An RNA of 207 nucleotides, treated with 2A3 and read out base by base. Source: RMDB library OK3TST, as collected in RNAgym.
RNA sequence: GGGAACGACUCGAGUAGAGUCGAAAACAGGAAAUGGCUCCAAGUGCCAAGGACAGAGCCAGGGAAGUUGCAAUGAAUUCCUGCCCGUCAGCCCCAGGCAGAUGCCUUGCACGUCUGAGUGGCCCAUGCAGAGCGUGGAGGUGGCCGCCACGGAACCCAUCCGAUACCCAUUCGUGGGUAUCGGAUGAAAAGAAACAACAACAACAAC
Reactivity to 2A3 in 0.01 (KOAc 150mM, MgCl2 10mM, bicine 150mM(pH8.5), 24C), signal-to-noise 2, nucleotides 027 to 156: c020a020g000g040a080a000a060u110g000g020c010u030c030c030a100a070g040u030g030c080c030a000a080g050g010a010c020a040g040a000g050c000c020a000g020g010g000a080a120g070u090u130g020c090a060a080u090g130a080a020u070u070c030c010u010g030c000c060c000g040u050c110a040g020c040c010c010c010a020g000g020c050a030g000a200u050g040c010c000u010u090g000c000a020c020g050u040c110u130g080a070g070u090g010g000c000c030c020a040u110g000c040a040g040a040g180c010g020u040g000g060a070g020g050u030g020g020c020c070g040c000c000a030c040g000g030a020a040c000c010
For 2A3, 905 sequencing reads were counted.